[RMDB]
RNA sequence: GGGAACGACUCGAGUAGAGUCGAAAAAUUGCCGCCGUUCUGCGCUACGCGGUUUGCCCCCUGUCGAUCGCACAUAUUGCUUCGACGGGUUCUCCCGCUGCGCCUUCGCCGCUGAGACCGGGAUCGCUCUGGCCACUAUAUUCGUAUAGUGGCCAGAAAAAGAAACAACAACAACAAC
Reactivity to DMS in 0.01 (KOAc 150mM, MgCl2 10mM, bicine 150mM(pH8.5), 24C), signal-to-noise 2, nucleotides 027 to 126: a080u000u010g000c010c030g030c030c070g000u000u000c070u000g000c050g030c050u010a060c100g010c020g000g000u000u010u010g010c060c010c020c030c020u000g010u000c010g020a020u000c280g000c030a050c300a150u010a110u010u000g010c030u010u000c000g010a020c000g000g020g020u000u010c130u000c010c000c000g010c050u000g000c030g020c020c090u010u000c080g010c020c020g000c030u010g000a120g000a120c160c020g040g010g000a060u000c120g000c100
Reactivity to 2A3 in 0.01 (KOAc 150mM, MgCl2 10mM, bicine 150mM(pH8.5), 24C), signal-to-noise 1, nucleotides 027 to 126: a020u090u060g030c010c000g020c030c060g070u040u000c020u130g050c000g000c020u070a020c020g000c000g000g000u040u060u150g060c000c010c010c000c040u030g030u000c000g000a020u000c110g070c110a060c050a130u300a180u180u290g000c000u000u010c000g010a000c000g030g030g000u000u000c040u020c030c000c000g060c030u020g010c060g030c000c020u030u090c020g040c010c010g060c080u060g030a010g030a150c000c060g000g000g050a060u080c060g000c000
An RNA of 177 nucleotides, treated with DMS and 2A3 and read out base by base. DMS adducts were read by reverse transcription with MarathonRT.